[RMDB]
RNA sequence: GGGAACGACUCGAGUAGAGUCGAAAACGAAUUAUCUCGAAUGACCAGCACAUCAUUGAGUUGAACCCUGCCGAUCUGAAUGCCACCGAUGGCUACAACCAGCAGCCGGCAUUGAAACGGGCUCGCGCAUGUAAGUCCGGUUCGCCGGACUUACAUGAAAAGAAACAACAACAACAAC
Reactivity to DMS in 0.01 (KOAc 150mM, MgCl2 10mM, bicine 150mM(pH8.5), 24C), signal-to-noise 3, nucleotides 027 to 126: c100g020a130a100u000u010a120u000c080u000c020g000a090a060u010g000a080c040c030a140g000c140a070c090a160u020c050a070u000u010g000a080g020u000u010g000a030a170c030c010c010u010g010c010c010g000a080u000c060u000g010a030a030u010g000c010c000a080c110c100g000a060u000g000g030c030u000a080c230a100a070c060c030a030g030c030a070g030c140c030g020g030c010a040u010u000g010a040a080a090c080g010g000g000c040u000c070g010c200g010
Reactivity to 2A3 in 0.01 (KOAc 150mM, MgCl2 10mM, bicine 150mM(pH8.5), 24C), signal-to-noise 2, nucleotides 027 to 126: c030g040a020a110u210u110a160u180c070u040c100g090a070a050u060g020a040c040c040a070g060c070a070c010a140u060c010a020u050u110g030a000g040u000u010g010a020a050c020c000c020u040g000c010c020g000a090u000c010u050g090a070a040u060g020c000c010a030c010c090g080a090u140g020g000c020u040a010c050a080a090c050c040a000g010c000a020g070c060c040g000g030c020a020u030u110g060a060a040a010c000g000g050g000c050u020c090g080c040g030
Source: RMDB library OK2TRN, as collected in RNAgym. Structure probing data (DMS and 2A3) for a 177-nucleotide construct. The reactions ran in a buffer of 150 mM KOAc, 10 mM MgCl2 and 150 mM bicine (pH 8.5), at 24 C. The DMS profile rests on 1,779 reads. Reactivities are given for positions 27 through 126. For DMS the reverse transcriptase was MarathonRT.